[RMDB]
RNA sequence: GGGAACGACUCGAGUAGAGUCGAAAACAAAGGGUAACAACCUUUCUUUGGGUGGAAAGAUUUCUCAAGUCUCUGCCGAGGAAGCAUACACUGUAAGCUUAUGUGCUUCACUGAUUUAAGAUGGCUUACUUACUGUCGCUUGUUAGCACUUGACUACAAUUCCCAAUGGAUUCGUCCAUUGGGAAUUAAAAGAAACAACAACAACAAC
Reactivity to 2A3 in 0.01 (KOAc 150mM, MgCl2 10mM, bicine 150mM(pH8.5), 24C), signal-to-noise 4, nucleotides 027 to 156: c070a010a050a000g030g010g030u080a040a000c040a010a070c040c000u020u050u040c040u110u060u040g080g010g010u020g020g030a090a060a070g010a050u010u150u020c040u010c090a050a070g090u020c020u010c000u080g010c010c010g040a050g020g000a010a010g000c010a010u070a080c070a020c140u120g010u070a000a020g000c010u100u070a030u150g060u020g040c000u020u010c040a120c100u130g090a170u090u100u140a060a070g060a130u090g040g000c010u030u030a010c010u020u050a080c050u090g060u070c060g030c090u030u080g010u040u080a020g000c020a040c100u060u080g050a030c010u070a040c160
Reactivity to DMS in 0.01 (KOAc 150mM, MgCl2 10mM, bicine 150mM(pH8.5), 24C), signal-to-noise 3, nucleotides 027 to 156: c050a050a070a060g020g020g000u010a100a160c120a080a090c000c010u010u000u000c040u000u000u010g020g020g030u010g000g020a080a100a100g000a100u010u000u000c050u000c050a100a110g030u010c030u000c000u010g000c030c040g030a140g010g000a050a030g030c020a050u000a070c070a080c090u010g020u010a040a040g030c020u000u000a130u000g030u000g010c000u000u000c010a200c090u000g010a110u010u010u000a060a110g010a120u000g030g020c000u000u000a040c030u010u000a110c090u010g030u010c010g010c040u010u000g010u000u000a090g020c040a080c090u010u010g010a120c100u000a070c130